Overview: An RNA of 177 nucleotides, treated with 2A3 and DMS and read out base by base. Source: RMDB library RFMREP, as collected in RNAgym. Reactivities are given for positions 27 through 126. As a SHAPE reagent, 2A3 marks flexible, mostly unpaired nucleotides at the ribose 2'-OH. The RNA was probed in 150 mM KOAc, 10 mM MgCl2 and 150 mM bicine (pH 8.5) at 24 C.

[RMDB]
RNA sequence: GGGAACGACUCGAGUAGAGUCGAAAACGGCAGAUGAUGAUUUUACUUGGAUUCCCCUUCAGAACAUUUAUGGGUGUUGCAAACUCCAAGCUUCUGAUGCUCACACGCUUGUCGUUCGCGACAAGCGGCGAGAAAUUAAGUUCGCUUAAUUUCUCGCAAAAGAAACAACAACAACAAC
Reactivity to 2A3 in 0.01 (KOAc 150mM, MgCl2 10mM, bicine 150mM(pH8.5), 24C), signal-to-noise 6, nucleotides 027 to 126: c040g140g030c100a060g060a210u090g000a020u040g020a030u080u050u010u090a020c010u020u010g030g010a040u050u040c010c000c010c000u010u030c020a020g030a050a020c010a070u080u210u220a180u260g070g040g040u110g070u140u170g100c090a140a110a030c020u010c020c010a050a040g020c070u010u030c010u010g020a020u020g010c010u060c030a130c010a000c020g000c000u000u010g000u000c000g030u020u060c240g010c000g050a000c000a000a010g010c000g010
Reactivity to DMS in 0.01 (KOAc 150mM, MgCl2 10mM, bicine 150mM(pH8.5), 24C), signal-to-noise 5, nucleotides 027 to 126: c110g010g030c140a060g000a080u000g010a200u010g000a060u000u000u000u000a030c020u000u000g000g030a260u000u000c000c000c000c050u000u000c040a040g000a040a020c070a090u010u010u010a130u010g000g010g020u010g000u000u020g010c270a100a090a060c040u000c010c040a030a090g000c120u000u000c010u000g020a070u000g010c090u020c160a090c220a290c040g010c000u010u010g010u000c000g030u000u010c180g010c010g000a010c000a010a000g010c010g010